RNA sequence: GGGAACGACUCGAGUAGAGUCGAAAAGCGAGAAGAUGUACAUUGCGAAGGAGGGUUAUUGCUAUGUUAACAUUUUCUUAGCAAUGUUAGUCAACGUAAAUGAAGAAAGUGCGAAGGACUUCACAAAGUAAGGCAGUUGGUUCGCCAACUGCCUUACAAAAGAAACAACAACAACAAC
Reactivity to DMS in 0.01 (KOAc 150mM, MgCl2 10mM, bicine 150mM(pH8.5), 24C), signal-to-noise 1, nucleotides 027 to 126: g040c000g060a070g000a040a250g010a010u000g060u000a020c010a080u000u050g000c010g000a090a150g000g000a060g000g000g000u090u000a000u050u020g000c160u000a010u090g060u000u000a000a110c000a100u000u000u000u000c000u000u000a250g000c000a000a000u000g000u000u000a060g100u000c130a030a190c060g010u000a010a130a070u000g000a100a020g000a190a110a010g000u000g050c060g000a150a130g000g000a100c080u050u070c130a090c300a050a210a050
Reactivity to 2A3 in 0.01 (KOAc 150mM, MgCl2 10mM, bicine 150mM(pH8.5), 24C), signal-to-noise 2, nucleotides 027 to 126: g030c050g020a000g030a080a000g050a040u060g000u040a000c000a040u000u000g000c000g000a110a000g060g000a050g050g180g030u160u150a180u020u060g080c070u220a110u200g060u000u000a030a000c000a050u020u070u000u000c040u050u100a000g000c000a010a010u000g000u000u050a030g000u000c000a000a110c020g160u120a000a010a120u100g060a020a010g220a140a080a000g080u060g000c040g000a080a000g040g000a000c050u030u020c020a030c040a100a050a000